[RMDB]
RNA sequence: GGGAACGACUCGAGUAGAGUCGAAAAUUUGUUCACAAGGGACACUUGGCAAUGCCUGGAGACAUUUUGGUUGUCAAAACAGCAGGAAGGCAGACGUGCUCCUGUACCUAUAGGUAGAGGCCAGGGCACUACCUGCAUGGUUCGCCAUGCAGGUAGUAAAAGAAACAACAACAACAAC
Reactivity to DMS in 0.01 (KOAc 150mM, MgCl2 10mM, bicine 150mM(pH8.5), 24C), signal-to-noise 4, nucleotides 027 to 126: u010u000u010g020u010u000c040a130c140a110a120g000g010g000a080c070a070c050u000u000g000g020c020a070a100u000g020c000c000u010g000g010a210g020a060c060a060u010u000u000u010g020g020u000u000g010u000c050a060a030a050a070c140a100g000c010a020g010g000a080a060g020g000c020a060g010a120c280g000u000g000c020u000c000c000u000g010u000a050c110c050u000a180u000a070g000g020u000a040g000a140g020g000c160c020a020g000g000g010c140
Reactivity to 2A3 in 0.01 (KOAc 150mM, MgCl2 10mM, bicine 150mM(pH8.5), 24C), signal-to-noise 3, nucleotides 027 to 126: u070u040u130g030u080u050c080a090c050a190a060g040g050g000a030c030a020c120u020u030g010g010c000a070a200u050g010c010c020u030g020g020a060g020a040c010a020u130u100u100u100g220g000u100u060g080u060c020a040a020a050a070c060a060g000c000a010g040g010a080a100g130g000c010a030g060a210c090g120u040g020c000u020c010c000u000g010u020a070c010c020u060a060u130a200g050g000u020a010g030a060g090g060c000c010a000g020g000g020c020